[RMDB]
RNA sequence: GGGAACGACUCGAGUAGAGUCGAAAACCCAGUUCCGGGGCCGUUCACUGGAUCCAAAGCCUCUAGAAGGAUAAUAUAGGCACUCCAUACCCUACUCCGACUCAAUACGUCCCCGUCGUACAGAAUGCAAGGGCAUCCCUGUUCGCAGGGAUGCCAACAAAUGUGCUUAGUUCGCUAAGCACAUUUGAAAAGAAACAACAACAACAAC
Reactivity to DMS in 0.01 (KOAc 150mM, MgCl2 10mM, bicine 150mM(pH8.5), 24C), signal-to-noise 1, nucleotides 027 to 156: c010c000c000a170g020u000u000c030c030g000g060g030g030c040c020g010u000u000c100a100c090u000g000g000a130u000c010c110a060a150a300g000c020c010u000c050u000a210g010a090a100g000g000a180u000a080a140u000a110u000a120g010g000c020a030c030u000c010c020a120u000a100c080c000c030u010a060c050u000c050c060g010a060c020u050c080a060a160u000a100c060g000u000c010c000c010c010g000u010c060g040u010a120c080a100g020a130a150u000g040c040a130a140g010g000g010c020a010u000c000c000c040u000g000u020u010c280g080c060a100g010g120g030a000u000g030c000c000a000a030
Reactivity to 2A3 in 0.01 (KOAc 150mM, MgCl2 10mM, bicine 150mM(pH8.5), 24C), signal-to-noise 2, nucleotides 027 to 156: c000c000c010a020g020u190u010c040c010g000g000g020g000c000c060g040u050u020c050a020c120u080g060g040a090u110c040c050a030a070a100g000c020c020u100c090u160a170g040a210a090g150g000a040u050a270a060u120a110u060a040g000g020c010a010c060u050c000c010a020u060a140c020c010c000u060a090c050u070c040c000g140a050c010u060c100a070a130u090a090c000g000u010c010c000c030c030g000u060c050g020u030a060c010a100g090a240a030u130g110c070a000a090g030g000g000c000a000u020c000c000c000u000g000u040u100c150g000c060a030g010g000g010a000u010g000c000c000a000a000